Chemical mapping of a 207-nucleotide RNA with 2A3. It was measured as part of the RMDB library PDB130. The RNA was probed in 150 mM KOAc, 10 mM MgCl2 and 150 mM bicine (pH 8.5) at 24 C. 2A3 adducts were read by reverse transcription with SuperScript II with manganese.
RNA sequence: GGGAACGACUCGAGUAGAGUCGAAAAGAGGAGAAGAAACCAAAUGGGAUUGCCUGAGUAGCGGCGAGUGAAAUGGCAUGAGCCUGUGUGGUAACUGCGUUUGGCGGGUUGUGUUUGUGGCAGCAGCGGCGAGUGCGAUUGAAUUCGGAUGCGGAGAGACCAAUGACUUGUUCGCAAGUCAUUGGUCAAAAGAAACAACAACAACAAC
Reactivity to 2A3 in 0.01 (KOAc 150mM, MgCl2 10mM, bicine 150mM(pH8.5), 24C), signal-to-noise 1, nucleotides 027 to 156: g030a010g000g030a010g010a010a080g030a040a060a050c050c010a020a060a160u150g010g020g000a010u020u020g010c010c010u020g010a030g000u030a000g010c020g060g070c200g050a050g000u050g010a010a000a040u060g020g000c040a020u080g000a020g080c010c010u050g000u030g030u060g020g010u010a000a080c030u050g010c030g080u070u020u050g040g000c020g020g030g010u000u040g000u010g020u000u000u080g110u030g010g000c020a030g000c010a000g020c080g070g000c010g020a030g020u040g000c000g030a070u010u080g040a070a130u080u000c030g000g050a000u040g030c030g030g000a070g000a000